[RMDB]
RNA sequence: GGGAACGACUCGAGUAGAGUCGAAAAGCCAUCAGGCCUAUCCGCACAAGAUCCUGACCGGGCGGCGCGACCGCAUCCGCACAUUGCGCCAGGCGGGCGGGCUUUCGGGCUUCACCAAGCGUGCGGAAGCUAAUUUACCGUUCGCGGUAAAUUAGCUAAAAGAAACAACAACAACAAC
Reactivity to DMS in 0.01 (KOAc 150mM, MgCl2 10mM, bicine 150mM(pH8.5), 24C), signal-to-noise 3, nucleotides 027 to 126: g040c000c040a140u000c110a070g000g010c170c040u000a120u000c020c010g010c020a060c090a120a110g010a090u000c010c000u000g010a110c160c050g000g030g040c110g000g000c050g010c030g000a040c120c070g020c080a070u000c070c040g020c020a060c140a160u010u000g010c010g020c060c060a080g010g010c020g000g000g000c030g020g000g000c050u010u000u000c130g020g010g010c020u000u010c100a100c050c030a080a110g020c110g030u000g020c000g000g020a080
Reactivity to 2A3 in 0.01 (KOAc 150mM, MgCl2 10mM, bicine 150mM(pH8.5), 24C), signal-to-noise 2, nucleotides 027 to 126: g050c030c010a100u130c090a040g030g000c020c020u040a060u060c010c010g000c020a050c010a070a030g040a090u040c020c000u050g030a060c070c050g000g060g000c030g010g000c040g000c000g060a030c000c040g030c050a040u040c040c040g070c030a030c020a130u070u180g030c030g020c020c020a010g030g060c000g020g020g000c020g010g020g000c000u040u030u080c040g030g000g000c000u100u090c040a080c020c020a040a010g100c030g020u000g000c000g000g020a000